An RNA of 207 nucleotides, treated with 2A3 and DMS and read out base by base. The RNA was probed in 150 mM KOAc, 10 mM MgCl2 and 150 mM bicine (pH 8.5) at 24 C. For DMS the reverse transcriptase was MarathonRT. It was measured as part of the RMDB library OK3TST.

[RMDB]
RNA sequence: GGGAACGACUCGAGUAGAGUCGAAAAACUCUCACCAGUUAAGGUACUGUAACUGAUCCUCGAGGAGUAGUGUCCGAGACUCAGGACACGAGUCUCUCUAGUACUGAACUAGAAGUACUCCUGGAGUUCAGUACCGAACUCCAGCGAGCGUGGGAGACUCAUCGAUGGUAUUCGUACCAUCGAUGAGAAAAGAAACAACAACAACAAC
Reactivity to 2A3 in 0.01 (KOAc 150mM, MgCl2 10mM, bicine 150mM(pH8.5), 24C), signal-to-noise 3, nucleotides 027 to 156: a000c010u000c000u000c000a010c010c010a000g010u040u090a170a050g000g000u000a000c010u020g050u060a110a050c030u060g080a080u080c020c040u080c120g090a020g010g000a010g020u080a030g020u010g040u000c000c020g010a050g070a120c090u020c160a080g060g020a020c010a000c040g000a010g020u020c020u000c000u000c000u020a000g000u020a080c100u130g130a190a020c000u020a040g020a070a020g050u030a010c010u000c010c000u020g050g010a000g000u020u010c010a000g030u030a020c020c000g000a000a000c000u010c030c010a060g060c070g120a020g030c070g020u030g000g030g000a010g030a040
Reactivity to DMS in 0.01 (KOAc 150mM, MgCl2 10mM, bicine 150mM(pH8.5), 24C), signal-to-noise 2, nucleotides 027 to 156: a040c010u000c000u000c020a020c040c020a060g010u000u000a110a060g010g000u000a020c010u000g020u000a080a080c060u010g010a120u000c090c030u000c060g020a120g000g010a080g020u000a080g010u000g020u000c000c010g030a130g010a150c080u000c060a210g040g000a090c060a070c020g050a100g000u000c000u000c000u010c020u000a020g010u000a230c110u000g000a120a060c030u000a050g000a130a150g020u020a040c000u000c000c000u030g020g000a060g000u000u010c000a020g010u010a000c050c020g000a030a020c010u000c010c040a100g000c080g010a060g000c050g040u000g000g000g000a070g000a190